An RNA of 207 nucleotides, treated with 2A3 and read out base by base.
[RMDB]
RNA sequence: GGGAACGACUCGAGUAGAGUCGAAAAAGUCACCUAUUACGAUAGGUGACAUUUGAACCAGCGAACAAUUCAGUUGCGAGAUUCGAGGUUUCAGUCUGAAUCAUAGUAGCCAUUACGAUGGCUACAUCUCACUCCCGACUGUUCGCAGUCGGGAGAACGAAAUGGAACUCUUCGGAGUUCCAUUUCGAAAAGAAACAACAACAACAAC
Reactivity to 2A3 in 0.01 (KOAc 150mM, MgCl2 10mM, bicine 150mM(pH8.5), 24C), signal-to-noise 2, nucleotides 027 to 156: a000g000u000c010a020c000c000u000a000u050u070a060c250g000a000u000a000g000g000u020g000a000c010a010u010u050u070g070a040a010c000c000a000g120c020g000a000a000c020a060a110u020u010c010a000g000u010u010g000c010g000a000g000a000u000u000c000g040a020g040g070u120u230u300c030a020g110u070c010u000g000a010a020u050c050a030u110a030g000u000a000g000c000c000a000u020u050a070c250g180a020u040g000g000c030u000a000c000a000u020c050u020c010a120c000u020c000c000c000g000a000c010u040g080u100u140c300g020c130a000g000u000c000g000g020g000a000g000a000a000

The RNA was probed in 150 mM KOAc, 10 mM MgCl2 and 150 mM bicine (pH 8.5) at 24 C. 2A3 adducts were read by reverse transcription with SuperScript II with manganese. The 2A3 profile rests on 831 reads.